[RMDB]
RNA sequence: GGGAACGACUCGAGUAGAGUCGAAAACGAAUCGGCGUGGCUCAUCUCGGCAGAGGCGGCGAUCCUCAGUACUCUUACUCUUUUCUUGAAAGAGGAGACUGCUGGACGCCCCGCCCGAGUCCGAGCAUGGGCCAGGUCCGACGAAGAGUCCGGAGAUCUUGUAUCUCCUCUUCGGAGGAGAUACAAGAAAAGAAACAACAACAACAAC
Reactivity to 2A3 in 0.01 (KOAc 150mM, MgCl2 10mM, bicine 150mM(pH8.5), 24C), signal-to-noise 2, nucleotides 027 to 156: c020g020a020a090u020c010g000g010c150g080u050g000g000c010u020c010a010u000c000u010c000g020g000c020a050g050a160g080g000c030g000g000c000g090a300u000c000c000u010c000a030g000u150a300c020u050c040u100u220a300c000u060c010u060u090u120u090c100u100u300g110a080a010a000g010a000g010g010a000g000a000c010u030g050c070u000g020g000a000c000g010c040c020c010c050g000c020c000c000g010a040g100u080c010c010g000a000g000c010a000u000g000g000g040c000c000a000g000g000u000c000c010g010a000c000g000a020a080g050a030g130u030c060c030g000g060a180g010a050u000
This 207-nucleotide RNA was probed chemically with 2A3. Source: RMDB library VIROID, as collected in RNAgym. Reactivities are rounded to 0.1 and cut off at 0 and 3. The reactions ran in a buffer of 150 mM KOAc, 10 mM MgCl2 and 150 mM bicine (pH 8.5), at 24 C. 2A3 adducts were read by reverse transcription with SuperScript II with manganese.